[RMDB]
RNA sequence: GGGAACGACUCGAGUAGAGUCGAAAACGUUAGCAGAAUCAUAAUCGCGCCGUCUUUCCGCCCAGGGACCGCCCCCGAUCUUGGGCAUAAGAUUCGUGUGCGUUGGCCCGGUCCUUUCGGUUCCGGAUUAGCCAGUGUUUUUCGAAACACUGGCUAAAAAAGAAACAACAACAACAAC
Reactivity to DMS in 0.01 (KOAc 150mM, MgCl2 10mM, bicine 150mM(pH8.5), 24C), signal-to-noise 2, nucleotides 027 to 126: c060g010u010u060a070g040c030a020g010a110a050u000c170a140u030a020a080u050c040g010c050g000c000c010g010u010c010u000u000u010c110c140g000c030c000c010a070g010g000g010a030c060c050g010c010c000c010c040c000g030a070u000c000u000u000g000g020g000c010a060u010a010a080g000a010u000u010c050g000u040g000u000g000c020g010u010u020g000g010c060c020c020g000g020u000c040c060u000u000u010c090g000g000u010u000c000c040g020g020a300
Reactivity to 2A3 in 0.01 (KOAc 150mM, MgCl2 10mM, bicine 150mM(pH8.5), 24C), signal-to-noise 2, nucleotides 027 to 126: c040g000u050u120a040g000c020a030g060a220a120u120c030a130u060a270a050u050c030g020c020g010c020c000g080u040c030u050u090u040c060c050g000c000c000c000a030g000g010g020a000c070c050g100c010c000c000c000c000g030a020u040c020u000u020g000g000g030c010a000u050a000a000g030a010u030u140c080g000u080g010u020g230c000g030u050u000g040g000c010c010c000g070g050u060c030c000u100u160u110c090g020g000u180u000c000c020g000g000a010
Chemical mapping of a 177-nucleotide RNA with DMS and 2A3. For 2A3 the reverse transcriptase was SuperScript II with manganese. It was measured as part of the RMDB library RFM100. For DMS, 3,379 sequencing reads were counted.